[RMDB]
RNA sequence: GGGAACGACUCGAGUAGAGUCGAAAAACGUCUCAGGCCGGGUUCGACAUCCUUCAGAUUCACCGCUUCACAUCUACAGACCUUCUGGUCGAUUUUCGUGACGGCUCUGUCCUGACGGCUACAGACCGUAGAAGGUAUGGUUCGCCAUACCUUCUACAAAAGAAACAACAACAACAAC
Reactivity to 2A3 in 0.01 (KOAc 150mM, MgCl2 10mM, bicine 150mM(pH8.5), 24C), signal-to-noise 9, nucleotides 027 to 126: a000c040g030u010c010u000c030a050g070g000c020c010g050g010g050u080u130c040g030a030c030a100u160c020c000u090u100c030a020g010a120u090u060c030a030c050c020g040c040u100u080c040a040c010a110u050c050u190a110c050a060g040a050c010c010u220u190c120u290g020g020u020c020g040a060u030u030u080u140c110g030u040g040a030c020g010g000c010u000c010u040g040u020c000c010u030g040a050c040g010g000c000u030a020c020a040g040a020c000c040
Reactivity to DMS in 0.01 (KOAc 150mM, MgCl2 10mM, bicine 150mM(pH8.5), 24C), signal-to-noise 6, nucleotides 027 to 126: a090c160g000u000c000u000c070a150g010g030c030c030g010g030g000u030u020c110g010a060c080a070u010c010c040u000u030c080a090g010a070u010u010c110a110c040c010g030c050u000u020c040a030c070a060u020c080u020a100c160a170g000a060c010c010u030u050c190u030g010g010u000c010g010a100u010u000u010u000c110g020u000g000a060c080g000g000c100u000c030u010g000u020c020c030u000g000a070c060g000g000c070u010a070c200a080g000a080c030c140
This 177-nucleotide RNA was probed chemically with 2A3 and DMS. For DMS the reverse transcriptase was MarathonRT. Source: RMDB library OK1LIB, as collected in RNAgym.